[RMDB]
RNA sequence: GGGAACGACUCGAGUAGAGUCGAAAACAUGUGGCUGGUGGCUUCUGGAUUACACAGCACCGUCAUAGAGUAUUGGCAAUGCCCUAGCAUACUAAUGAGGAAGAAAAUGUGGUCUUGGCCAGGAAGAAAUGUGGACUAGGUUCGCCUAGUCCACAUUAAAAGAAACAACAACAACAAC
Reactivity to DMS in 0.01 (KOAc 150mM, MgCl2 10mM, bicine 150mM(pH8.5), 24C), signal-to-noise 2, nucleotides 027 to 126: c070a060u020g030u010g010g010c020u020g020g020u010g010g000c050u020u000c020u060g020g020a200u000u010a120c080a120c040a050g020c060a040c030c030g000u000c010a040u000a070g000a140g020u000a060u000u010g020g000c020a050a120u000g020c020c010c090u000a110g030c020a040u000a080c040u010a090a110u010g000a130g020g010a090a060g040a060a120a050a060u000g020u010g000g020u000c080u010u020g000g020c000c010a080g010g000a090a070g000a030
Reactivity to 2A3 in 0.01 (KOAc 150mM, MgCl2 10mM, bicine 150mM(pH8.5), 24C), signal-to-noise 1, nucleotides 027 to 126: c040a030u090g030u040g100g040c160u190g000g030u020g030g150c060u100u010c030u060g060g060a110u110u230a090c110a010c030a040g070c000a000c000c000g070u000c030a000u030a020g090a030g020u140a050u150u100g070g010c070a100a060u090g000c030c040c000u030a020g000c020a010u000a080c000u030a110a060u220g060a060g050g040a090a080g000a030a200a010a060u150g020u000g040g000u000c090u090u060g080g000c050c020a060g030g030a060a070g090a040